[RMDB]
Background: Chemical mapping of a 177-nucleotide RNA with 2A3 and DMS. Values cover nucleotides 27 to 126. The reactions ran in a buffer of 150 mM KOAc, 10 mM MgCl2 and 150 mM bicine (pH 8.5), at 24 C.
RNA sequence: GGGAACGACUCGAGUAGAGUCGAAAAAAAUUAUGGUCGCCGGCACGUAUGUGCACACCGAGAAUCACACUCUUUCGCCGUCAACCGUGUCGGUAGUCUUGCACAUCAGGAAUCCGUCUGCGUUGAACAAUUGAUCACUUUUCGAAGUGAUCAAUUGAAAAGAAACAACAACAACAAC
Reactivity to 2A3 in 0.01 (KOAc 150mM, MgCl2 10mM, bicine 150mM(pH8.5), 24C), signal-to-noise 3, nucleotides 027 to 126: a010a010a000u230u110a130u090g020g000u020c020g000c010c000g010g020c000a000c010g050u080a040u190g080u130g030c010a000c010a000c040c040g020a020g070a080a070u150c070a040c000a020c110u030c000u040u130u120c080g010c040c020g030u010c020a030a030c040c010g000u010g020u030c030g000g020u000a030g010u000c010u020u070g010c040a040c000a130u100c020a020g050g060a100a040u010c020c020g050u030c050u020g050c040g090u050u090g030a050a020
Reactivity to DMS in 0.01 (KOAc 150mM, MgCl2 10mM, bicine 150mM(pH8.5), 24C), signal-to-noise 5, nucleotides 027 to 126: a040a040a060u000u010a060u000g010g010u000c040g020c020c040g010g000c020a020c050g010u000a060u010g020u000g020c040a070c090a080c160c090g000a060g010a070a060u010c160a070c160a150c080u000c030u000u000u000c090g020c050c040g000u010c050a090a070c150c020g020u000g010u000c010g010g020u000a030g010u000c040u000u000g000c070a030c090a070u000c070a050g000g000a060a070u010c020c030g000u010c020u000g000c070g020u000u000g010a090a180